[RMDB]
RNA sequence: GGGAACGACUCGAGUAGAGUCGAAAAGAUAUGGACCACGUAGAACCGAUACAGCGACGAAGUCGGAAACGACAGAGCUGUAUUCGGUUGAGGUGGUCCUAAGUCAAAACGUAGCUUCGGCUACGAACACACCCAAGAUCUUCGGAUCUUGGGUGUGAAAAGAAACAACAACAACAAC
Reactivity to 2A3 in 0.01 (KOAc 150mM, MgCl2 10mM, bicine 150mM(pH8.5), 24C), signal-to-noise 1, nucleotides 027 to 126: g000a000u040a050u200g000g000a000c010c000a000c010g020u070a060g070a290a000c000c010g000a000u030a000c000a020g020c050g300a300c050g100a300a050g000u000c000g000g070a080a040a010c030g000a000c020a010g030a000g000c000u000g000u010a000u090u150c010g000g000u000u000g010a010g000g000u000g000g000u030c000c000u050a000a000g010u000c020a000a000a070a050c010g010u010a000g000c010u070u040c300g080g000c000u000a000c000g000a030a000
Reactivity to DMS in 0.01 (KOAc 150mM, MgCl2 10mM, bicine 150mM(pH8.5), 24C), signal-to-noise 2, nucleotides 027 to 126: g000a040u010a300u030g000g010a000c000c000a000c010g060u000a260g040a020a000c000c000g050a020u000a000c010a020g020c000g000a150c230g000a030a090g000u010c000g000g000a090a060a190c030g010a000c030a030g000a180g030c000u000g000u000a000u020u010c000g020g000u000u010g000a050g050g010u000g020g000u000c010c000u000a000a070g000u010c030a080a040a070a090c020g030u000a000g000c030u000u000c180g000g000c000u010a000c000g000a040a080